The record gives the reactivity of an RNA of 207 nucleotides to 2A3. The reactions ran in a buffer of 150 mM KOAc, 10 mM MgCl2 and 150 mM bicine (pH 8.5), at 24 C. Values cover nucleotides 27 to 156. For 2A3 the reverse transcriptase was SuperScript II with manganese. For 2A3, 581 sequencing reads were counted.
[RMDB]
RNA sequence: GGGAACGACUCGAGUAGAGUCGAAAAGAUAUCGAGGAAUUGGAGAAUGAUGCAGCUUUUCAGCAAGCUGUGAGGACUAGUCAUGGCAGAAGACCUCCAAUAACUGCUAAAAUAUCAAGCACGGCAGUUACUAGACCUAUAGCUACUGGAUAUGGGACUGAGGGACUACUUUCGAGUAGUCCCUCAGAAAAGAAACAACAACAACAAC
Reactivity to 2A3 in 0.01 (KOAc 150mM, MgCl2 10mM, bicine 150mM(pH8.5), 24C), signal-to-noise 1, nucleotides 027 to 156: g010a040u090a040u080c040g010a010g020g030a070a100u000u010g030g010a060g030a050a100u110g040a030u100g020c000a000g020c000u010u130u010u190c030a020g110c030a060a060g000c000u000g030u060g040a040g010g010a010c010u010a010g010u040c080a030u040g010g000c010a000g030a120a000g020a110c000c030u000c020c020a030a000u020a070a000c000u000g000c000u030a050a000a080a030u150a040u150c100a160a000g060c040a030c060g060g000c000a000g020u000u000a000c000u000a030g020a050c040c000u050a030u030a090g000c010u020a020c040u090g060g000a030u090a060u060g060g060g020a010